[RMDB]
The record gives the reactivity of an RNA of 177 nucleotides to 2A3 and DMS. It was measured as part of the RMDB library OK2TRN. The RNA was probed in 150 mM KOAc, 10 mM MgCl2 and 150 mM bicine (pH 8.5) at 24 C. For DMS, 12,485 sequencing reads were counted.
RNA sequence: GGGAACGACUCGAGUAGAGUCGAAAAGGGCGAUCUGGAUGGCCUUGCCGCUCCGUAUGAGAAUCCCGUGCUCGGCCCCCAGCCCCAUACCCACCAUGAGGGCCGUGGGCGUGGCGAGUCCCAGGGCCAACCUAGGGGAUUUCGAUCCCCUAGGUUGAAAAGAAACAACAACAACAAC
Reactivity to 2A3 in 0.01 (KOAc 150mM, MgCl2 10mM, bicine 150mM(pH8.5), 24C), signal-to-noise 4, nucleotides 027 to 126: g020g010g000c100g060a120u100c060u060g030g040a090u110g040g010c020c000u000u020g010c000c000g010c020u030c020c040g200u210a180u300g200a260g030a120a090u100c060c060c000g020u100g030c000u010c030g030g000c020c000c000c010c000a000g000c000c000c000c000a030u140a100c030c010c000a020c020c020a120u180g090a180g070g030g010c020c050g200u050g000g000g000c020g030u060g090g080c110g000a020g040u080c020c010c000a010g000g030g000c000
Reactivity to DMS in 0.01 (KOAc 150mM, MgCl2 10mM, bicine 150mM(pH8.5), 24C), signal-to-noise 8, nucleotides 027 to 126: g000g000g000c110g030a070u000c040u000g010g000a080u010g020g000c010c010u000u000g010c040c050g000c120u000c010c180g020u020a090u010g000a130g000a110a080u000c130c300c030g010u010g020c010u000c140g020g020c000c000c270c010c010a040g000c040c000c000c010a080u010a090c010c010c010a250c140c110a070u010g010a120g000g000g020c010c020g010u000g000g000g000c060g020u000g010g000c110g010a140g000u010c000c000c000a060g000g000g020c030